[RMDB]
Conditions: 150 mM KOAc, 10 mM MgCl2 and 150 mM bicine (pH 8.5), 24 C. Chemical mapping of a 177-nucleotide RNA with 2A3 and DMS. The 2A3 profile rests on 746 reads. Reactivities are given for positions 27 through 126.

RNA sequence: GGGAACGACUCGAGUAGAGUCGAAAACGCUCAACGAUGCGAAACAUCUUAUGGAGGCGCUGGAUAUCCGCCACGUGCCGAUUGUGGAUGCGAAUAAAAAGCUGCUGGGUAUCGUCAGCCAACGCGACUGACUCACCGAUUUCGAUCGGUGAGUCAGAAAAGAAACAACAACAACAAC
Reactivity to 2A3 in 0.01 (KOAc 150mM, MgCl2 10mM, bicine 150mM(pH8.5), 24C), signal-to-noise 1, nucleotides 027 to 126: c020g110c000u070c020a030a130c050g040a010u050g010c010g100a040a020a090c000a030u060c020u080u240a140u220g110g050a040g040g000c010g000c030u000g050g030a040u040a070u200c000c020g090c070c010a020c070g000u070g020c080c030g120a130u030u150g060u080g000g030a050u050g070c030g040a040a030u160a110a090a030a000a010g060c130u120g000c040u080g060g000g030u070a030u040c050g100u040c050a020g010c050c020a050a030c080g000c030g070a060
Reactivity to DMS in 0.01 (KOAc 150mM, MgCl2 10mM, bicine 150mM(pH8.5), 24C), signal-to-noise 1, nucleotides 027 to 126: c080g000c080u000c040a080a170c130g000a000u000g020c040g000a300a140a300c040a010u010c030u020u000a040u000g000g000a250g040g020c050g030c000u010g010g010a150u000a010u010c180c060g040c010c000a030c100g000u000g000c020c070g000a160u010u000g000u010g000g000a040u000g000c010g020a150a090u010a090a170a090a130a030g000c010u000g020c010u010g070g020g020u000a040u010c010g010u020c030a090g010c010c030a070a080c180g000c020g020a160